The record gives the reactivity of an RNA of 177 nucleotides to DMS and 2A3.

RNA sequence: GGGAACGACUCGAGUAGAGUCGAAAACAUUUGGAUCAGAGCCUCUGAUAACCCGCCCAGUCAGAUUGACUAGGACAAUUGGAUGGUUUGUUGACGAAGAUUCAGAGAUCGCUGAAGUCAUCCGUGAGUAAACAUAGCGGUUCGCCGCUAUGUUUACAAAAGAAACAACAACAACAAC
Reactivity to DMS in 0.01 (KOAc 150mM, MgCl2 10mM, bicine 150mM(pH8.5), 24C), signal-to-noise 2, nucleotides 027 to 126: c080a160u020u010u020g010g020a070u000c020a050g000a180g000c160c060u020c030u020g030a030u000a090a120c090c070c130g020c010c000c060a020g020u000c000a140g000a160u010u010g030a030c010u000a050g000g010a110c130a100a100u020u020g020g030a040u010g000g000u000u000u000g040u000u000g000a090c060g020a050a060g000a090u010u000c070a070g020a150g000a050u000c120g020c020u010g000a070a050g000u000c040a110u010c000c030g000u000g000a160
Reactivity to 2A3 in 0.01 (KOAc 150mM, MgCl2 10mM, bicine 150mM(pH8.5), 24C), signal-to-noise 1, nucleotides 027 to 126: c010a010u260u090u300g050g020a010u070c030a000g000a040g220c080c110u000c030u040g020a050u000a090a110c040c020c000g000c000c020c010a010g020u000c020a050g070a300u170u130g010a090c000u000a040g040g000a050c030a090a030u100u110g040g010a040u050g060g160u020u120u080g210u070u060g080a100c000g000a070a030g030a120u130u130c000a000g030a050g020a210u080c080g000c080u000g070a070a020g030u020c020a000u000c000c050g070u100g000a030

The 2A3 profile rests on 512 reads. Conditions: 150 mM KOAc, 10 mM MgCl2 and 150 mM bicine (pH 8.5), 24 C. It was measured as part of the RMDB library OK2TRN. Values are in units of 0.01, from 0 to 300, in steps of 10. 2A3 adducts were read by reverse transcription with SuperScript II with manganese.